[RMDB]
RNA sequence: GGGAACGACUCGAGUAGAGUCGAAAAGACUGAGCCGCGGGAUGCGGAGCUUAGAAAACAAAAAGUCACUAUUAAUAGACAACCUCUGUUCCCCCCAUCAUACCACAAGCAAGUGAGAUUGGCUAAGUGGAUCUUUAGACUUCGGUCUAAAGAUCCAAAAAGAAACAACAACAACAAC
Reactivity to DMS in 0.01 (KOAc 150mM, MgCl2 10mM, bicine 150mM(pH8.5), 24C), signal-to-noise 1, nucleotides 027 to 126: g100a180c000u010g000a000g090c000c000g030c020g010g040g000a160u100g020c000g000g000a000g080c050u000u010a130g010a110a080a010a230c120a070a070a110a010a160g010u010c000a080c070u110a280u000u120a240a010u030a090g000a120c030a110a140c070c000u000c040u020g000u000u000c000c000c000c040c000c070a170u000c120a070u010a150c060c000a070c000a140a170g000c220a160a050g000u000g000a040g000a130u000u000g000g000c120u000a060a020g000
Reactivity to 2A3 in 0.01 (KOAc 150mM, MgCl2 10mM, bicine 150mM(pH8.5), 24C), signal-to-noise 2, nucleotides 027 to 126: g000a010c060u030g060a030g010c000c000g090c040g080g110g190a110u160g000c020g000g000a000g050c000u010u010a030g090a030a060a030a100c050a000a040a150a000a000g010u060c010a010c040u000a000u300u100a090a190u080a010g050a090c000a000a030c000c000u000c000u000g000u020u020c080c000c080c000c050c000a000u000c000a010u300a240c000c000a000c000a080a040g020c000a060a090g000u000g060a020g000a170u080u140g000g060c010u030a100a100g040